[RMDB]
RNA sequence: GGGAACGACUCGAGUAGAGUCGAAAACGCAGCAGCCGUUCCAGGAACAGCUCGCGCACCUGGCGCAGGUUCUCCAGCCGCCGCGCGAGUCCGUCGGGGUGCAGGACCAGCCGGAAGACGUUGGGGAUCCUGCUCAGCUAUUCGUAGCUGAGCAGGAAAAAGAAACAACAACAACAAC
Reactivity to DMS in 0.01 (KOAc 150mM, MgCl2 10mM, bicine 150mM(pH8.5), 24C), signal-to-noise 1, nucleotides 027 to 126: c140g010c040a100g050c150a040g000c010c000g000u000u000c030c040a160g010g000a040a070c070a100g000c000u000c030g040c030g000c000a100c120c130u010g000g020c080g000c060a100g000g000u000u000c030u000c060c000a150g040c070c060g000c050c020g010c060g010c010g000a090g010u000c030c010g000u000c070g000g010g030g020u000g000c060a070g020g000a070c050c030a190g020c030c010g020g000a110a060g000a090c080g060u000u000g020g000g000g000a140
The record gives the reactivity of an RNA of 177 nucleotides to DMS. Conditions: 150 mM KOAc, 10 mM MgCl2 and 150 mM bicine (pH 8.5), 24 C. Values cover nucleotides 27 to 126. Source: RMDB library OK2TST, as collected in RNAgym.